This 177-nucleotide RNA was probed chemically with 2A3 and DMS. Reactivities are given for positions 27 through 126. The RNA was probed in 150 mM KOAc, 10 mM MgCl2 and 150 mM bicine (pH 8.5) at 24 C. For 2A3, 3,002 sequencing reads were counted. It was measured as part of the RMDB library TTRDEL.
RNA sequence: GGGAACGACUCGAGUAGAGUCGAAAAGAUAUGGAGGUAGCUUUUGACGCGAAGGUGUCGGAAACGACAUUUCUUCGCGAUAAGCUGCUCCUAAGUCAAAACCCCGCCCCGUUCGCGGGGCGGGGAACAUAUAGAUAAUGUUCGCAUUAUCUAUAUGAAAAGAAACAACAACAACAAC
Reactivity to 2A3 in 0.01 (KOAc 150mM, MgCl2 10mM, bicine 150mM(pH8.5), 24C), signal-to-noise 2, nucleotides 027 to 126: g010a050u060a050u120g020g000a050g200g260u120a010g040c020u130u090u170u180g190a130c050g000c010g010a000a000g010g010u000g000u000c000g020g030a050a090a020c020g020a000c010a020u130u250u090c020u000u000c020g010c010g000a000u000a010a000g000c020u000g020c010u010c000c000u030a140a040g070u060c030a060a050a230a300c010c020c030c000g020c120c010c020c010g030u050u080c250g020c000g100g090g050g000c030g000g000g000g000a010a000
Reactivity to DMS in 0.01 (KOAc 150mM, MgCl2 10mM, bicine 150mM(pH8.5), 24C), signal-to-noise 2, nucleotides 027 to 126: g010a030u010a300u010g000g000a030g030g020u010a010g030c000u000u000u000u000g010a210c060g010c000g010a040a010g010g020u000g000u000c000g000g010a090a060a220c000g010a000c010a000u000u010u020c010u000u000c010g010c000g020a030u000a010a020g000c000u000g000c000u000c000c000u010a010a140g000u010c050a070a090a200a170c020c010c000c040g020c000c040c000c010g010u000u020c220g020c040g000g000g000g020c090g020g000g000g000a000a010